[RMDB]
RNA sequence: GGGAACGACUCGAGUAGAGUCGAAAAGCGAAAUCUAUAGUGUUGAUGAGCAUGCAGUACACCACGCGCAGCGCCCUCAGCAUAUUCUCGUCCAGCUUCUCGCCCGGCCUGGCGCGCGCCGUGAGCCCUCUACCGAAAGUUUCGACUUUCGGUAGAGAAAAGAAACAACAACAACAAC
Reactivity to DMS in 0.01 (KOAc 150mM, MgCl2 10mM, bicine 150mM(pH8.5), 24C), signal-to-noise 3, nucleotides 027 to 126: g020c030g010a060a120a050u010c070u000a110u010a100g010u000g000u000u000g010a050u010g010a130g000c110a090u000g020c060a090g020u020a100c140a100c110c090a040c060g010c050g020c030a090g010c050g000c010c010c100u000c070a050g000c030a080u000a060u010u000c040u000c040g000u000c040c050a080g010c080u000u000c080u000c070g000c020c030c030g010g020c030c030u000g000g010c040g030c050g000c020g000c030c030g020u000g010a150g010c100c060
Reactivity to 2A3 in 0.01 (KOAc 150mM, MgCl2 10mM, bicine 150mM(pH8.5), 24C), signal-to-noise 2, nucleotides 027 to 126: g020c020g090a000a050a020u120c100u130a120u160a200g080u080g050u170u100g030a080u030g000a010g050c020a030u070g000c020a030g060u120a030c030a060c130c000a020c030g060c000g000c030a090g010c010g000c020c000c000u040c010a010g000c000a060u010a120u210u050c040u010c050g060u030c040c010a030g000c030u110u020c030u020c030g020c000c000c000g020g000c010c030u030g020g010c010g010c000g000c030g000c050c040g020u040g020a030g000c020c010